[RMDB]
RNA sequence: GGGAACGACUCGAGUAGAGUCGAAAAGGGGGAUCACACACCUAUGAUGUACUACGCUAGGCUGGCAGCGUCUCUCGGGGUUCCGACCCAUGUAUGGAGGAUACACUCUGCUACACAUCACGAGCUGCAUGCGCAUCCAGUUCGCUGGAUGCGCAUGAAAAGAAACAACAACAACAAC
Reactivity to DMS in 0.01 (KOAc 150mM, MgCl2 10mM, bicine 150mM(pH8.5), 24C), signal-to-noise 2, nucleotides 027 to 126: g000g000g000g000g020a050u000c090a060c120a070c120a020c030c040u010a100u000g000a110u000g010u000a050c110u020a110c170g010c040u000a070g020g000c080u010g000g000c110a060g050c090g040u000c010u000c050u000c040g070g000g000g010u000u000c070c050g000a190c010c000c020a060u010g010u000a070u000g010g000a120g010g050a120u010a060c130a100c040u000c020u000g000c130u000a090c120a020c090a050u060c130a100c120g000a120g000c080u000g010
Reactivity to 2A3 in 0.01 (KOAc 150mM, MgCl2 10mM, bicine 150mM(pH8.5), 24C), signal-to-noise 1, nucleotides 027 to 126: g040g020g000g000g020a010u030c000a020c000a000c060a020c060c000u040a080u090g070a000u030g060u180a130c110u010a000c050g040c080u030a040g090g010c080u000g040g020c030a020g020c000g140u030c000u070c010u000c000g030g000g000g000u120u000c020c100g050a050c060c020c030a000u060g000u050a100u070g100g000a020g050g000a050u050a130c020a030c060u060c060u030g000c000u120a020c030a000c000a090u180c020a000c080g000a000g060c000u050g000